[RMDB]
RNA sequence: GGGAACGACUCGAGUAGAGUCGAAAACGGGAAGAGACUCUCGGGCGCCAGCUGACGGAUUGCAAUGUCACCACGCGCGGGGAUAGAUCCUCUGCAGACGACUGAAAUGACCAAGCGGGUCGUGUAAGUCUAGUGGUGGGUUCGCCCACCACUAGACAAAAGAAACAACAACAACAAC
Reactivity to DMS in 0.01 (KOAc 150mM, MgCl2 10mM, bicine 150mM(pH8.5), 24C), signal-to-noise 1, nucleotides 027 to 126: c010g040g000g000a020a070g000a080g000a170c040u060c050u000c000g040g050g000c010g000c010c050a070g000c170u000g000a050c080g030g170a050u000u050g010c190a010a140u110g000u000c000a020c080c000a170c060g000c000g000c110g000g010g030g000a050u000a020g020a160u060c060c020u000c000u000g050c050a120g020a110c020g000a020c030u000g000a020a300a080u060g010a080c150c010a050a110g020c230g000g000g000u000c010g000u020g030u050a160a100
Reactivity to 2A3 in 0.01 (KOAc 150mM, MgCl2 10mM, bicine 150mM(pH8.5), 24C), signal-to-noise 2, nucleotides 027 to 126: c010g000g030g010a060a010g070a010g100a060c060u010c010u060c070g030g060g010c020g020c010c070a010g000c030u090g000a080c020g050g090a150u100u170g040c090a100a050u070g010u020c000a010c060c000a020c050g050c000g000c010g050g020g000g030a020u080a070g050a060u050c000c000u040c010u010g000c020a030g040a160c080g000a000c000u030g010a140a000a050u180g010a050c010c000a010a010g140c030g050g050g000u010c010g010u000g000u090a090a090